[RMDB]
RNA sequence: GGGAACGACUCGAGUAGAGUCGAAAAUAUAAGGAGGCUAGACAGUAUCAGCCAUUCUGAUGGAGUCUUAUCCUGGAAAGGCUAUGAAGCACUGGCCAAAGAAAGUCAAGACUUUCUCAUGGGACCAAUGUCACGUUCAGUUCGCUGAACGUGACAUAAAAGAAACAACAACAACAAC
Reactivity to DMS in 0.01 (KOAc 150mM, MgCl2 10mM, bicine 150mM(pH8.5), 24C), signal-to-noise 1, nucleotides 027 to 126: u000a170u000a150a140g010g010a230g020g010c000u000a040g010a220c100a070g000u010a080u000c040a040g010c100c000a060u000u000c000u010g030a070u020g020g040a100g000u040c150u000u000a040u000c000c000u000g070g000a030a030a080g000g000c000u010a060u000g000a130a300g010c120a040c010u010g010g000c000c010a040a050a010g000a010a010a000g010u000c110a220a160g020a090c010u000u000u010c000u000c060a060u040g030g000g010a170c060c010a050